Description:
An RNA of 177 nucleotides, treated with 2A3 and DMS and read out base by base. DMS adducts were read by reverse transcription with MarathonRT. Conditions: 150 mM KOAc, 10 mM MgCl2 and 150 mM bicine (pH 8.5), 24 C. High DMS reactivity at an A or C suggests that its Watson-Crick edge is free. It was measured as part of the RMDB library OK2TRN. The DMS profile rests on 1,838 reads.
RNA sequence: GGGAACGACUCGAGUAGAGUCGAAAAAGUGGAGAUUGGUAUUUGGUGCAUGAAGCAGAUUGUGUGGAUGACUUGAAUGCUUUGGAUGACUUAUUUGAAAACAGUACAGAUGGUUCGGGGAUUUCCACGGUUAAUGUCGGUUCGCCGACAUUAACCGAAAAGAAACAACAACAACAAC
Reactivity to 2A3 in 0.01 (KOAc 150mM, MgCl2 10mM, bicine 150mM(pH8.5), 24C), signal-to-noise 1, nucleotides 027 to 126: a000g030u020g010g020a030g000a100u050u070g050g000u080a050u040u100u080g020g010u060g030c030a050u050g050a070a010g000c050a010g110a140u140u120g030u030g030u020g100g050a040u060g020a020c000u010u040g080a110a000u060g040c000u050u010u060g040g030a030u030g020a020c020u070u060a120u160u160u020g070a070a080a010a010c030a020g010u070a020c000a070g110a070u070g000g000u000u030c030g000g030g010g020a040u030u000u100c030c000a060
Reactivity to DMS in 0.01 (KOAc 150mM, MgCl2 10mM, bicine 150mM(pH8.5), 24C), signal-to-noise 2, nucleotides 027 to 126: a070g020u010g000g000a060g000a080u000u010g010g020u000a060u000u000u000g000g030u000g010c070a070u010g010a110a090g000c100a020g010a090u000u000g030u000g020u010g000g020a070u000g000a110c080u000u010g000a070a060u010g000c030u000u030u000g020g000a090u010g000a080c100u000u010a110u000u010u020g000a090a040a050a090c200a050g000u000a050c120a080g010a100u000g010g010u010u000c050g000g000g000g000a170u000u000u000c020c030a080